RNA sequence: GGGAACGACUCGAGUAGAGUCGAAAAGUCAUAUGCCGGCAAACGUCUGGUGAAGGAUUUUAGUGUCAAAGGACAGAUGGUUAGCUUACAGGAGGAAGGCGAGGAGUAUACGCCGCGUCAGGGACUAGCAUGUAUAGUACUUCGGUACUAUACAUGCAAAAGAAACAACAACAACAAC
Reactivity to DMS in 0.01 (KOAc 150mM, MgCl2 10mM, bicine 150mM(pH8.5), 24C), signal-to-noise 3, nucleotides 027 to 126: g010u010c040a060u010a090u010g020c020c010g010g010c030a090a090a100c170g000u000c020u000g050g010u000g010a120a080g000g010a070u000u000u000u000a090g030u000g010u010c030a050a060a070g010g000a050c050a060g000a080u000g010g010u000u020a050g000c050u000u010a090c100a070g000g010a070g000g010a090a080g010g010c050g000a060g000g010a050g020u000a110u010a100c100g010c040c010g010c070g000u000c030a060g010g000g010a110c090u020a140